[RMDB]
RNA sequence: GGGAACGACUCGAGUAGAGUCGAAAACCAGCCCUCACUGAGCACAACACAACAAUGGGCUGCUUCUUGAUUUUCCGUGAAGUUUCUGGACUUGCAAGAACAUUUGUUUUAGUUAUGCCUGAGAGCCGAAUAGUCUCAAAUUCGUUUGAGACUAUUCAAAAGAAACAACAACAACAAC
Reactivity to 2A3 in 0.01 (KOAc 150mM, MgCl2 10mM, bicine 150mM(pH8.5), 24C), signal-to-noise 8, nucleotides 027 to 126: c010c000a010g000c000c010c000u010c010a050c100u080g040a030g050c020a020c020a060a050c010a010c010a090a020c010a030a060u040g030g090g010c040u030g030c020u040u010c000u030u050g070a110u090u050u080u020c050c070g110u080g080a110a080g150u120u170u060c060u080g030g020a040c020u040u090g010c050a040a020g020a050a030c010a050u080u100u090g030u020u050u020u000a050g010u010u020a020u050g000c000c010u050g020a050g010a000g040c010c020
Reactivity to DMS in 0.01 (KOAc 150mM, MgCl2 10mM, bicine 150mM(pH8.5), 24C), signal-to-noise 8, nucleotides 027 to 126: c030c010a250g010c010c010c010u000c040a070c210u010g010a200g000c020a040c050a020a040c030a080c160a030a030c050a040a040u000g000g010g020c090u000g000c090u000u000c010u000u000g010a080u000u010u000u010c020c060g010u000g000a070a160g010u000u010u000c020u000g010g000a050c180u000u000g010c020a030a030g000a030a040c030a060u010u010u000g010u010u000u000u010a150g010u000u000a050u010g000c010c020u000g000a070g000a050g010c050c110
The data come from the RNA Mapping Database (RMDB), library OK2TST. An RNA of 177 nucleotides, treated with 2A3 and DMS and read out base by base. High 2A3 reactivity points to a flexible backbone, as in loops and unpaired stretches. For DMS, 15,049 sequencing reads were counted. Reactivities are given for positions 27 through 126.